Structure probing data (DMS) for a 177-nucleotide construct. DMS adducts were read by reverse transcription with MarathonRT. The DMS profile rests on 562 reads. The reactions ran in a buffer of 150 mM KOAc, 10 mM MgCl2 and 150 mM bicine (pH 8.5), at 24 C.
RNA sequence: GGGAACGACUCGAGUAGAGUCGAAAAGUUAGUGAAAAAUGAUGACGGAUCCCCGACACAGUCAAUACCAUCCGAUGACUGUGCAAACUGAAUUUGCCUGUUAACGGGUGGCAUCCGCGCACCCAUACGUCAGGACCUAGUUCGCUAGGUCCUGACGAAAAGAAACAACAACAACAAC
Reactivity to DMS in 0.01 (KOAc 150mM, MgCl2 10mM, bicine 150mM(pH8.5), 24C), signal-to-noise 1, nucleotides 027 to 126: g010u010u000a290g020u010g000a020a100a060a040a120u000g000a160u040g000a060c010g000g000a130u000c000c000c010c040g040a180c090a080c120a210g000u000c070a040a130u000a210c000c000a000u000c000c010g000a050u000g000a010c000u000g000u000g020c000a000a040a030c250u070g000a000a300u060u000u000g000c030c000u000g000u000u000a090a050c000g000g000g010u000g050g000c040a000u000c060c090g030c130g000c140a050c050c010c030a080u010a090